Overview:
The data come from the RNA Mapping Database (RMDB), library TTRDEL. Structure probing data (2A3 and DMS) for a 177-nucleotide construct. For DMS, 6,357 sequencing reads were counted. DMS adducts were read by reverse transcription with MarathonRT. Reactivities are rounded to 0.1 and cut off at 0 and 3. Conditions: 150 mM KOAc, 10 mM MgCl2 and 150 mM bicine (pH 8.5), 24 C.
RNA sequence: GGGAACGACUCGAGUAGAGUCGAAAAGAUAUGGAUUCCUGGAGCUUCGGUCUCGGAAACGAGACGGAAGCUAUGAAGGGACGGUCCUAAGUCAAAAGAAAUCUAGUACUUCGGUACUAGAUUUCAACCCGUAUAGUAAGUUCGCUUACUAUACGGGAAAAGAAACAACAACAACAAC
Reactivity to 2A3 in 0.01 (KOAc 150mM, MgCl2 10mM, bicine 150mM(pH8.5), 24C), signal-to-noise 4, nucleotides 027 to 126: g010a010u080a040u160g000g010a030u070u080c010c000u030g030g060a030g010c000u030u030c130g150g010u010c000u010c010g000g030a070a060a020c010g000a010g020a000c030g050g010a010a000g000c020u090a290u030g020a010a010g030g000g010a020c230g100g020u030c000c010u030a100a060g050u040c040a030a030a030a210g010a000a010a010u000c000u010a000g010u010a010c030u050u110c300g020g000u000a000c000u010a000g000a010u000u000u000c000a000a000
Reactivity to DMS in 0.01 (KOAc 150mM, MgCl2 10mM, bicine 150mM(pH8.5), 24C), signal-to-noise 6, nucleotides 027 to 126: g010a070u000a300u010g010g000a030u000u010c000c000u010g000g020a020g010c000u000u000c010g010g010u000c000u000c000g010g000a090a090a140c010g000a010g000a010c010g010g010a010a010g000c010u010a020u010g020a170a160g000g000g000a030c300g000g010u010c000c000u000a070a080g010u000c050a070a030a120a170g000a000a000a000u000c000u000a000g010u000a000c000u000u000c210g020g010u000a000c000u000a000g000a000u000u000u000c010a080a160